RNA sequence: GGGAACGACUCGAGUAGAGUCGAAAAGUGGUGGCAGCAGAUGAACGGCGCUGUGGCGUUGCCUGAGGCGCUUGUCUGUGCGAGGUAUUUCUCCGACCAGUGGCACGCCCUGACCCAGCGACUAGACGUCCCGUGGAAGAUUCGUCUUCCACGGGACAAAAGAAACAACAACAACAAC
Reactivity to DMS in 0.01 (KOAc 150mM, MgCl2 10mM, bicine 150mM(pH8.5), 24C), signal-to-noise 1, nucleotides 027 to 126: g020u000g020g020u010g000g030c040a140g010c010a000g000a080u010g000a060a120c250g000g010c030g040c010u010g000u000g020g010c040g000u000u010g030c000c010u000g010a120g010g000c030g010c030u000u000g010u000c030u000g010u000g050c040g020a100g000g000u020a060u010u020u010c060u000c020c010g010a110c060c010a120g020u010g000g000c000a070c110g000c030c010c010u000g010a100c080c050c020a150g000c100g010a040c090u000a070g020a250c300